Structure probing data (DMS and 2A3) for a 207-nucleotide construct. DMS (dimethyl sulfate) methylates the pairing face of unpaired adenines and cytosines. Reactivities are given for positions 27 through 156. DMS adducts were read by reverse transcription with MarathonRT.
RNA sequence: GGGAACGACUCGAGUAGAGUCGAAAAAGGAGUCAGCUUCAGACUCUAGCUAAAUGAUUGUAUAACCUUGCAGCUCUCCCCUAAGUGAGGAGGCAAUGUUGAAAGUCCCAUGUCUUAUCAGAACCAGGGAGGCAGAUGAGAAACUGCCUUAUGGCAGGACUUAUACUGCGUUCGCGCAGUAUAAGUCAAAAGAAACAACAACAACAAC
Reactivity to DMS in 0.01 (KOAc 150mM, MgCl2 10mM, bicine 150mM(pH8.5), 24C), signal-to-noise 2, nucleotides 027 to 156: a130g020g000a060g030u000c010a150g010c090u000u010c120a200g000a020c010u000c010u000a060g030c040u000a060a070a120u000g000a060u000u000g020u000a080u000a060a080c040c010u000u000g040c060a120g000c020u020c050u010c020c010c010c070u000a090a160g030u000g020a050g020g010a030g020g020c040a050a050u000g000u000u030g010a090a120a070g000u000c010c020c030a220u000g040u000c010u000u010a110u000c030a130g010a150a070c030c040a100g040g040g000a040g020g000c030a080g010a050u000g020a140g000a100a140a160c000u000g010c020c010u000u000a040u020g000g030c000a030g000
Reactivity to 2A3 in 0.01 (KOAc 150mM, MgCl2 10mM, bicine 150mM(pH8.5), 24C), signal-to-noise 3, nucleotides 027 to 156: a020g030g020a010g000u000c000a020g030c160u160u100c100a010g010a040c010u000c000u010a030g020c050u110a060a090a130u140g080a110u170u150g120u070a110u020a090a020c010c020u040u080g010c020a070g010c010u010c010u000c070c030c000c010u020a160a080g070u070g150a090g010g020a000g010g000c040a060a060u070g000u060u030g050a080a040a040g060u020c000c000c030a010u070g060u000c050u020u140a110u080c050a040g050a040a020c020c000a020g230g080g010a030g000g000c000a030g020a110u100g030a040g070a090a070a010c010u020g000c010c000u010u050a070u100g010g030c010a000g070